This 177-nucleotide RNA was probed chemically with DMS and 2A3. For DMS, 1,216 sequencing reads were counted. Conditions: 150 mM KOAc, 10 mM MgCl2 and 150 mM bicine (pH 8.5), 24 C. For 2A3, 2,010 sequencing reads were counted.
RNA sequence: GGGAACGACUCGAGUAGAGUCGAAAACGCGACCUCUUGAAGCGUGGGCGGCAACCGGGUCAAGCGCGAUCACGGUGCCGAGGUCAGCCCUUCUGGGGUGAUGCGGCACGCAAGGCCAUGCCUUGUGGUGAGUAAACAACUUCGGUUGUUUACUCACAAAAGAAACAACAACAACAAC
Reactivity to DMS in 0.01 (KOAc 150mM, MgCl2 10mM, bicine 150mM(pH8.5), 24C), signal-to-noise 1, nucleotides 027 to 126: c030g010c000g000a100c140c000u000c040u000u000g000a050a040g020c250g030u000g000g020g000c020g000g010c030a030a020c010c020g000g020g020u000c030a170a140g050c220g000c170g000a020u000c000a070c020g010g000u000g010c000c000g000a070g000g000u020c050a130g010c030c020c030u000u010c040u000g020g010g000g000u000g010a100u000g040c000g000g000c060a250c020g010c000a010a010g000g000c000c170a200u010g000c030c000u000u000g000u010g000
Reactivity to 2A3 in 0.01 (KOAc 150mM, MgCl2 10mM, bicine 150mM(pH8.5), 24C), signal-to-noise 2, nucleotides 027 to 126: c030g000c010g040a030c000c000u070c030u060u200g040a030a020g020c020g060u090g000g020g020c000g000g000c010a110a010c010c000g000g000g020u000c010a060a030g240c100g040c070g150a010u020c010a020c150g000g010u000g010c000c030g020a030g000g060u110c040a120g080c000c010c030u000u040c030u070g030g030g000g010u010g010a050u150g000c040g000g080c020a010c050g000c010a010a020g010g010c040c130a130u240g000c010c000u000u000g020u010g060